The record gives the reactivity of an RNA of 177 nucleotides to DMS and 2A3. The reactions ran in a buffer of 150 mM KOAc, 10 mM MgCl2 and 150 mM bicine (pH 8.5), at 24 C. The 2A3 profile rests on 3,380 reads. For 2A3 the reverse transcriptase was SuperScript II with manganese. Values cover nucleotides 27 to 126.
[RMDB]
RNA sequence: GGGAACGACUCGAGUAGAGUCGAAAACGUUUAUGCGCCGCCUGAUGUUACUUUCCGGCGAAACGGUCAAUGUCGCGAUCCGUAACGGCAAUGAAGCGGUAUUAAUUGGUCAGUUAGAGUGUAAAUCGCUCCAGAUUAUAUUCGUAUAAUCUGGAGCAAAAGAAACAACAACAACAAC
Reactivity to DMS in 0.01 (KOAc 150mM, MgCl2 10mM, bicine 150mM(pH8.5), 24C), signal-to-noise 7, nucleotides 027 to 126: c070g000u000u000u000a040u010g020c030g010c100c020g020c050c020u000g000a050u000g010u000u000a100c170u000u000u000c030c070g000g010c020g010a060a060a040c040g010g010u000c050a030a040u000g010u010c030g020c060g020a090u000c040c060g020u010a090a130c100g010g000c170a060a090u000g020a090a180g010c020g000g000u000a060u010u010a070a070u010u000g010g010u010c030a080g010u000u000a100g010a100g020u000g000u010a030a050a060u000c140
Reactivity to 2A3 in 0.01 (KOAc 150mM, MgCl2 10mM, bicine 150mM(pH8.5), 24C), signal-to-noise 3, nucleotides 027 to 126: c020g000u040u050u050a130u110g010c030g050c030c050g020c010c010u000g030a050u040g090u190u090a120c050u030u040u030c030c000g000g010c020g030a050a030a010c020g000g000u030c020a050a090u070g050u110c020g000c060g060a070u010c000c000g010u020a080a120c060g050g010c020a040a090u140g050a120a000g000c010g000g010u030a060u060u070a110a080u070u070g070g000u020c040a040g000u120u140a080g030a040g080u060g010u030a070a070a020u080c070